[RMDB]
RNA sequence: GGGAACGACUCGAGUAGAGUCGAAAAGAUAUGGAAUCCGGUAUCGAGCUACUCGGAAACGAGAAUAGCCCAGACAGUACGGGAUUCCUAAGUCAAAGGCACAAAAGAGUUCGCUCUUUUGUGCCAACAUAGCUAUGUGCUUCGGCACAUAGCUAUGAAAAGAAACAACAACAACAAC
Reactivity to 2A3 in 0.01 (KOAc 150mM, MgCl2 10mM, bicine 150mM(pH8.5), 24C), signal-to-noise 3, nucleotides 027 to 126: g010a000u050a010u060g010g000a030a010u000c010c090g220g010u040a060u300c160g010a010g000c010u010a010c000u010c020g000g020a020a020a000c010g000a000g040a230a300u010a030g000c040c010c000a150g130a240c120a060g010u020a000c090g110g000g000a000u000u030c000c010u000a030a000g010u000c020a060a120a230g000g000c000a010c000a020a020a010a000g030a000g020u130u170c280g080c200u000c000u010u000u000u010g000u000g020c000c000a010a000
Reactivity to DMS in 0.01 (KOAc 150mM, MgCl2 10mM, bicine 150mM(pH8.5), 24C), signal-to-noise 3, nucleotides 027 to 126: g010a020u000a220u010g000g000a020a020u000c010c010g010g010u000a020u000c140g000a020g000c000u010a030c000u010c000g020g000a030a030a080c000g000a000g000a170a160u000a000g010c000c020c020a220g030a130c300a170g000u000a020c000g010g000g010a040u000u000c010c000u010a020a060g010u000c030a050a100a120g020g000c000a010c000a000a000a000a010g010a040g000u000u010c220g000c000u000c000u000u010u000u000g000u000g010c010c000a010a030